[RMDB]
The record gives the reactivity of an RNA of 207 nucleotides to 2A3. It was measured as part of the RMDB library PDB130.
RNA sequence: GGGAACGACUCGAGUAGAGUCGAAAAUUGAGGGUUGGUGACCCGUGGGCGCCCACGCGUGCGGAAAAACUGAACCAACGGGGUGGGAACUUUUCGUUUCUUCUCCGGAGUCUUGUUUCGAGACAUCUGCCAGAUGGGGAGUUUGGCUGGGGCGGCAGUCCACAGCAAUGUUCGCAUUGCUGUGGACAAAAGAAACAACAACAACAAC
Reactivity to 2A3 in 0.01 (KOAc 150mM, MgCl2 10mM, bicine 150mM(pH8.5), 24C), signal-to-noise 1, nucleotides 027 to 156: u080u130g010a070g070g000g020u070u140g060g020u080g110a040c000c030c000g010u040g000g060g050c060g000c030c060c000a070c020g040c010g070u080g060c060g010g030a080a030a020a020a020c100u130g010a040a010c010c040a010a030c000g000g000g000g010u000g010g020g000a000a000c000u070u090u270u300c180g010u000u040u000c000u010u000c000u000c000c000g020g000a040g000u040c060u070u100g060u050u090u200c040g000a040g000a050c030a080u040c020u080g090c010c040a030g040a140u080g010g000g010g000a080g040u020u120u100g010g000c030u050g000g040g000g000c010g010g000c030a030